[RMDB]
RNA sequence: GGGAACGACUCGAGUAGAGUCGAAAAUAGAAGGGCAGUUAAAAGAAGGGUAGUUGAAGAAGUGGAUGCUGGGCCGCGUAAAAGAGCUUAUGUAGCAUUAGAUACAGAUAAUCCAACGCCAGCUUUGGAAGCAGUAACUGAGCAAGCCAUAGUUCCAAUGAAGUGAAAUCUUCGGAUUUCACUUCAUAAAAGAAACAACAACAACAAC
Reactivity to DMS in 0.01 (KOAc 150mM, MgCl2 10mM, bicine 150mM(pH8.5), 24C), signal-to-noise 2, nucleotides 027 to 156: u000a090g000a050a070g010g010g040c030a090g020u000u000a020a090a050a120g000a080a090g010g020g040u000a050g020u000u000g020a070a120g000a070a130g030u010g000g040a100u000g030c060u020g000g000g040c010c050g000c030g050u010a040a080a100a150g000a100g020c020u000u030a070u000g010u000a060g000c020a150u010u000a050g000a080u000a110c030a120g000a170u010a060a070u000c020c020a070a070c030g040c020c020a070g000c070u000u010u000g010g010a080a090g000c040a060g030u020a080a070c040u020g000a070g020c050a060a110g020c000c010a060u000a070g010u000u000c010c000a130
Reactivity to 2A3 in 0.01 (KOAc 150mM, MgCl2 10mM, bicine 150mM(pH8.5), 24C), signal-to-noise 2, nucleotides 027 to 156: u080a000g050a030a040g030g000g030c010a080g030u090u140a040a140a000a080g060a050a050g040g010g010u060a070g080u040u100g030a050a060g010a080a030g040u070g060g000a030u060g010c030u030g010g030g000c030c020g000c020g010u020a000a050a000a100g030a010g010c010u080u100a060u150g080u070a040g030c030a040u050u090a050g000a010u080a060c050a010g100a070u110a060a060u050c000c030a000a030c070g020c050c000a000g030c000u050u020u100g020g010a080a000g010c010a020g000u070a020a020c010u050g020a000g030c030a010a000g000c010c000a030u030a020g040u020u040c000c000a000
An RNA of 207 nucleotides, treated with DMS and 2A3 and read out base by base.
For DMS, 3,280 sequencing reads were counted.
Values cover nucleotides 27 to 156.
For 2A3, 1,180 sequencing reads were counted.
It was measured as part of the RMDB library OK3TST.
DMS adducts were read by reverse transcription with MarathonRT.